[RMDB]
RNA sequence: GGGAACGACUCGAGUAGAGUCGAAAAGGCCAUCCCGGGCAACCCUAAGGGCGAUAGAGUGCCAGAGUUUCCAACUGUGCCAACUGAGGGUUACAAGUGCGUUGGGUACGUUGCUCCCACGGGGUCGUCGUAAAGUGUGAUUCGUCACACUUUACGAAAAAGAAACAACAACAACAAC
Reactivity to DMS in 0.01 (KOAc 150mM, MgCl2 10mM, bicine 150mM(pH8.5), 24C), signal-to-noise 8, nucleotides 027 to 126: g010g020c020c040a090u000c000c000c020g020g000g020c020a180a070c010c010c000u000a170a240g010g010g010c050g010a090u000a070g010a150g010u000g010c030c020a080g000a110g010u000u000u010c070c050a080a050c050u000g020u000g010c020c030a070a110c120u000g010a110g010g000g010u000u010a060c100a060a070g010u000g010c070g010u000u000g000g000g000u000a040c070g000u010u010g010c060u000c010c010c020a100c190g000g010g000g010u000c100g000
Reactivity to 2A3 in 0.01 (KOAc 150mM, MgCl2 10mM, bicine 150mM(pH8.5), 24C), signal-to-noise 6, nucleotides 027 to 126: g070g000c000c010a010u000c010c010c000g020g000g010c020a030a030c010c010c020u040a070a100g020g010g000c020g020a030u070a150g230a030g080u060g030c030c010a050g030a040g140u060u160u020c030c020a020a020c040u040g000u050g030c030c010a100a070c160u190g060a110g150g100g040u040u080a040c030a060a080g040u030g070c060g100u130u080g060g000g020u030a020c030g050u060u120g020c050u040c010c010c010a040c040g010g000g020g040u040c060g060
An RNA of 177 nucleotides, treated with DMS and 2A3 and read out base by base. The reactions ran in a buffer of 150 mM KOAc, 10 mM MgCl2 and 150 mM bicine (pH 8.5), at 24 C.